[RMDB]
RNA sequence: GGGAACGACUCGAGUAGAGUCGAAAAAGGGGUCCGACGCCAGAGAAGGGAAGGCACUCCGGGCCGAAUGGUCGAGUAGCACACAGAGGGAGAAAAUCACACGGAGAUAAGCAGAAAACCCACCUCCACCAAUACUAUGCUUCGGCAUAGUAUUGGUAAAAGAAACAACAACAACAAC
Reactivity to DMS in 0.01 (KOAc 150mM, MgCl2 10mM, bicine 150mM(pH8.5), 24C), signal-to-noise 1, nucleotides 027 to 126: a100g000g000g010g030u000c010c050g020a140c060g030c020c050a150g020a140g010a080a080g000g000g010a110a120g000g000c050a030c030u010c050c000g000g000g060c000c050g010a110a110u050g000g030u010c000g000a080g020u000a070g020c040a050c050a030c020a080g010a050g000g010g000a060g000a030a040a070a050u000c070a110c110a090c120g020g010a110g000a070u020a030a080g010c070a080g000a060a080a170a070c010c010c040a240c080c020u000c030c000
Reactivity to 2A3 in 0.01 (KOAc 150mM, MgCl2 10mM, bicine 150mM(pH8.5), 24C), signal-to-noise 1, nucleotides 027 to 126: a000g000g020g010g000u030c050c020g040a040c070g040c020c010a040g030a050g080a220a090g060g020g000a080a040g030g010c030a000c000u040c000c000g030g000g010c020c020g060a160a090u260g000g040u020c000g010a030g000u060a010g050c040a020c020a010c040a040g030a090g040g010g010a060g090a040a060a000a030u120c050a050c010a010c040g020g000a060g010a040u080a150a040g000c050a030g060a140a080a050a070c000c000c000a000c030c020u000c000c080
This 177-nucleotide RNA was probed chemically with DMS and 2A3. Source: RMDB library VIROID, as collected in RNAgym. As a SHAPE reagent, 2A3 marks flexible, mostly unpaired nucleotides at the ribose 2'-OH. The RNA was probed in 150 mM KOAc, 10 mM MgCl2 and 150 mM bicine (pH 8.5) at 24 C.